The data come from the RNA Mapping Database (RMDB), library OK1LIB.
This 177-nucleotide RNA was probed chemically with DMS and 2A3.
The reactions ran in a buffer of 150 mM KOAc, 10 mM MgCl2 and 150 mM bicine (pH 8.5), at 24 C.
The DMS profile rests on 20,984 reads.
For DMS the reverse transcriptase was MarathonRT.
[RMDB]
RNA sequence: GGGAACGACUCGAGUAGAGUCGAAAAGAAAAAGCAUACGUUUGCGUCUGUUGUGGAUAGUCAACAGGUUAACACAGUAAGAUAGGAUCGAAGAUCCUUUGUCGUUGACGCAGUGUAUGCGAAGAAAGGGUAACUUAUAGUUCGCUAUAAGUUACCCAAAAGAAACAACAACAACAAC
Reactivity to DMS in 0.01 (KOAc 150mM, MgCl2 10mM, bicine 150mM(pH8.5), 24C), signal-to-noise 6, nucleotides 027 to 126: g020a040a060a100a100a130g000c000a000u010a000c000g010u010u020u020g030c020g000u000c010u000g020u010u000g020u000g010g000a150u000a040g010u000c020a140a130c270a110g010g020u000u000a020a070c010a010c020a020g010u010a050a120g000a030u000a030g010g000a010u000c010g000a120a140g010a020u000c010c000u000u030u030g020u000c020g020u010u020g000a020c020g020c000a010g000u010g010u000a000u000g010c010g000a050a070g010a100a070a100
Reactivity to 2A3 in 0.01 (KOAc 150mM, MgCl2 10mM, bicine 150mM(pH8.5), 24C), signal-to-noise 9, nucleotides 027 to 126: g110a000a090a000a010a000g000c010a010u010a000c010g030u210u300u080g010c010g000u000c010u040g060u070u020g000u040g030g070a250u060a060g050u040c030a070a110c090a300g040g020u040u030a030a010c010a000c000a010g060u110a140a010g030a060u080a030g020g010a010u020c100g160a200a040g010a040u000c010c000u050u100u150g110u020c060g030u050u090g000a000c000g000c000a000g000u000g000u020a000u000g010c000g010a020a000g030a020a040a020